RNA sequence: GGGAACGACUCGAGUAGAGUCGAAAAUGUUUGCCGAAUUGGUGGACGCCGCUAUUGUCAGCGACCGGUGAUACGGCAACCUCUGUUGUGGUCAGCGCCGGCCAUACCGCUCGCCGUUAUCCGACGAGCUGUCAGAGAAAUUCGUUUCUCUGACAGCAAAAGAAACAACAACAACAAC
Reactivity to 2A3 in 0.01 (KOAc 150mM, MgCl2 10mM, bicine 150mM(pH8.5), 24C), signal-to-noise 2, nucleotides 027 to 126: u060g010u000u020u040g050c020c000g060a250a240u150u190g170g000u020g170g000a010c010g000c080c000g000c070u140a180u250u220g130u190c060a020g030c000g050a070c010c000g070g040u040g000a030u020a140c010g000g000c010a000a000c010c050u020c060u060g170u230u050g030u040g030g020u030c020a040g100c080g000c090c020g020g000c000c010a020u060a040c010c030g030c030u020c030g030c000c010g010u050u090a050u030c030c060g010a070c020g020a080
Reactivity to DMS in 0.01 (KOAc 150mM, MgCl2 10mM, bicine 150mM(pH8.5), 24C), signal-to-noise 4, nucleotides 027 to 126: u010g000u000u000u000g010c010c010g010a150a120u010u010g020g010u000g010g000a070c040g030c050c000g020c070u020a110u010u020g020u010c100a050g020c020g020a100c050c010g000g000u000g000a080u000a060c020g000g000c020a060a030c060c080u020c100u010g010u010u000g030u000g000g000u000c020a140g000c110g010c070c060g010g000c050c050a060u000a060c090c110g000c090u000c070g010c030c000g000u010u000a160u000c120c020g010a060c110g000a140